[RMDB]
Chemical mapping of a 207-nucleotide RNA with DMS and 2A3.
2A3 adducts were read by reverse transcription with SuperScript II with manganese.
The DMS profile rests on 3,649 reads.
The RNA was probed in 150 mM KOAc, 10 mM MgCl2 and 150 mM bicine (pH 8.5) at 24 C.
For DMS the reverse transcriptase was MarathonRT.
Reactivities are given for positions 27 through 156.
RNA sequence: GGGAACGACUCGAGUAGAGUCGAAAAUCGAGACUGCUGUUCAAGAUCCCGUGGCCCGCAACUCCAACAUUGCCAUGGCCCUAGUCCAGGAACAGCUGAACGAGCCUCCGGCAACUCGGAGGCGCCGAAAUCUCAGACAUAGCCGGCCGCUUAGACGACAUUACACUUGUUUCGACAAGUGUAAUGUAAAAGAAACAACAACAACAAC
Reactivity to DMS in 0.01 (KOAc 150mM, MgCl2 10mM, bicine 150mM(pH8.5), 24C), signal-to-noise 2, nucleotides 027 to 156: u000c050g000a070g030a100c090u010g010c010u000g000u000u010c000a110a210g000a080u000c050c070c050g030u010g040g000c030c000c190g020c070a070a050c030u000c070c250a010a120c090a090u010u010g060c020c070a110u010g010g010c030c000c040u000a080g010u010c020c060a180g030g020a070a050c020a030g010c000u000g000a040a140c010g020a140g010c010c000u000c010c010g000g020c050a070a170c300u010c060g030g000a030g060g000c000g000c020c040g000a060a050a030u000c010u000c020a100g020a120c070a090u000a120g000c000c030g010g020c020c030g030c040u000u010a140g010a110c020g050
Reactivity to 2A3 in 0.01 (KOAc 150mM, MgCl2 10mM, bicine 150mM(pH8.5), 24C), signal-to-noise 1, nucleotides 027 to 156: u110c010g010a000g020a040c020u030g010c010u000g020u030u020c030a070a040g020a120u110c070c040c030g050u130g000g000c000c030c020g010c020a040a040c050u090c140c040a060a030c050a140u060u060g010c020c040a080u170g020g020c020c000c020u070a050g020u000c020c050a060g120g000a020a020c000a000g000c020u030g020a070a050c030g010a010g000c010c000u000c000c000g000g030c080a140a080c100u020c120g000g000a010g000g000c010g000c010c000g010a060a070a040u040c040u000c010a030g020a070c020a050u100a020g030c040c000g060g010c030c010g020c050u070u070a030g020a100c050g010